[RMDB]
RNA sequence: GGGAACGACUCGAGUAGAGUCGAAAAUGUGUCCCAGGGAAUUGGAAGGUCAUCCUUCACAGGAUCGUGUGGAAGUCCUGCUCGGGGCGGAAGCAUUAAAACCAUUCGAGCUAGUCAAUGCGUGGCGUUACCUCCAGGUUCUUCGGAACCUGGAGAAUCCCCUUUUAUAGUUCGCUAUAAAAGGGGAAAAAGAAACAACAACAACAAC
Reactivity to DMS in 0.01 (KOAc 150mM, MgCl2 10mM, bicine 150mM(pH8.5), 24C), signal-to-noise 2, nucleotides 027 to 156: u000g020u010g030u020c000c000c010a300g000g000g020a070a070u000u000g020g020a090a070g010g050u000c080a130u000c000c020u010u000c130a080c070a140g020g010a050u000c100g030u020g000u010g020g010a230a200g000u000c020c000u010g020c120u000c070g000g000g030g040c060g010g000a260a130g000c000a040u000u000a020a060a110a060c010c020a130u010u010c030g010a070g010c010u010a110g030u010c050a060a100u010g010c090g000u000g010g040c040g040u000u000a120c140c010u000c000c000a040g000g000u000u010c000u000u000c260g030g000a010a000c010c000u000g000g010a000g000a000a100
Reactivity to 2A3 in 0.01 (KOAc 150mM, MgCl2 10mM, bicine 150mM(pH8.5), 24C), signal-to-noise 1, nucleotides 027 to 156: u190g040u010g040u040c010c000c000a020g000g040g010a030a080u160u120g020g010a060a020g030g010u160c020a050u140c060c020u030u090c080a040c020a050g010g010a040u070c070g010u020g040u040g020g050a050a000g000u040c030c020u040g110c070u060c070g000g000g000g000c030g020g010a010a010g010c000a010u050u240a000a040a060a030c020c000a040u080u050c000g080a000g050c000u020a040g050u050c050a030a130u110g020c060g060u040g000g030c050g030u090u030a020c000c000u000c000c020a000g000g000u000u000c000u000u000c000g080g010a000a010c000c000u000g000g000a000g020a000a000
An RNA of 207 nucleotides, treated with DMS and 2A3 and read out base by base.
High 2A3 reactivity points to a flexible backbone, as in loops and unpaired stretches.
The reactions ran in a buffer of 150 mM KOAc, 10 mM MgCl2 and 150 mM bicine (pH 8.5), at 24 C.
Source: RMDB library M2RFPK, as collected in RNAgym.
The 2A3 profile rests on 596 reads.
Values cover nucleotides 27 to 156.